[RMDB]
RNA sequence: GGGAACGACUCGAGUAGAGUCGAAAAGAGAGCCUGCUGCAUAGCGACAGCCUCACAGAGAACGAAGAGGUGAAGGUGCUGAAGCGGCAUGCACAGCUGGCGAUAACGCUGGCGCCGCGCAUGCUGACGGACUUACGUUUUUCGAAACGUAAGUCCGAAAAGAAACAACAACAACAAC
Reactivity to DMS in 0.01 (KOAc 150mM, MgCl2 10mM, bicine 150mM(pH8.5), 24C), signal-to-noise 3, nucleotides 027 to 126: g000a130g000a120g000c060c040u010g040c060u000g000c080a060u010a100g020c040g000a130c070a180g010c030c010u000c040a090c090a110g010a130g000a060a170c130g040a080a100g020a080g010g010u010g010a080a060g010g000u000g010c050u000g010a140a110g010c050g030g010c010a000u000g010c000a020c010a140g000c010u000g010g000c000g000a110u020a130a170c040g000c010u010g000g000c000g010c120c110g020c020g000c000a010u000g000c000u000g000a130
Reactivity to 2A3 in 0.01 (KOAc 150mM, MgCl2 10mM, bicine 150mM(pH8.5), 24C), signal-to-noise 3, nucleotides 027 to 126: g120a000g000a010g040c010c010u030g030c050u040g000c040a080u050a170g050c030g050a020c030a020g000c010c000u030c000a040c020a000g210a020g060a190a040c130g020a140a100g030a020g050g030u060g020a080a020g080g000u090g020c020u050g020a070a020g080c030g010g020c010a000u030g010c000a020c000a020g000c000u000g040g010c030g070a110u140a300a020c060g010c000u030g030g000c030g000c090c080g000c020g000c000a000u010g000c000u010g010a030

The record gives the reactivity of an RNA of 177 nucleotides to DMS and 2A3. Reactivities are rounded to 0.1 and cut off at 0 and 3. The DMS profile rests on 1,822 reads. Conditions: 150 mM KOAc, 10 mM MgCl2 and 150 mM bicine (pH 8.5), 24 C. The data come from the RNA Mapping Database (RMDB), library OK2TRN.